[RMDB]
Source information:
Structure probing data (2A3 and DMS) for a 177-nucleotide construct. For DMS the reverse transcriptase was MarathonRT. Source: RMDB library OK2TRN, as collected in RNAgym.
RNA sequence: GGGAACGACUCGAGUAGAGUCGAAAAAUCGAGGCCGCCAGCGCGGAGGCUUGCGCGCGCGCCGGCGUCGCGUUCGACUGGCGGCAUUGCGUGCUCGGCUGCGGGCUCGCCGGCGUGAACCAUCGCACGAUGAUUAGUCAUUCGUGACUAAUCAUCGAAAAGAAACAACAACAACAAC
Reactivity to 2A3 in 0.01 (KOAc 150mM, MgCl2 10mM, bicine 150mM(pH8.5), 24C), signal-to-noise 2, nucleotides 027 to 126: a000u120c030g010a020g110g000c000c000g000c010c030a040g010c160g020c070g150g020a020g090g090c030u050u100g020c030g000c020g030c000g000c010g010c020c010g040g010c020g130u060c070g020c000g080u050u080c040g040a160c030u010g020g020c000g000g010c010a010u010u010g010c020g030u030g000c000u010c020g060g020c060u160g120c030g050g000g040c040u020c030g010c020c040g040g000c000g020u060g030a010a050c020c010a060u090c060g000c060a040
Reactivity to DMS in 0.01 (KOAc 150mM, MgCl2 10mM, bicine 150mM(pH8.5), 24C), signal-to-noise 3, nucleotides 027 to 126: a090u020c020g000a090g010g010c000c000g010c010c020a030g010c060g030c030g010g000a070g010g010c050u010u010g010c060g010c070g010c110g020c050g010c070c040g010g010c010g020u000c130g010c070g020u010u010c050g000a120c010u000g000g000c000g010g000c020a040u000u010g000c010g010u000g000c040u000c040g010g010c140u010g020c050g010g000g010c020u000c020g000c030c030g010g010c010g030u000g000a080a160c050c050a080u000c070g000c110a220

Conditions: 150 mM KOAc, 10 mM MgCl2 and 150 mM bicine (pH 8.5), 24 C. The 2A3 profile rests on 3,396 reads. The DMS profile rests on 4,673 reads.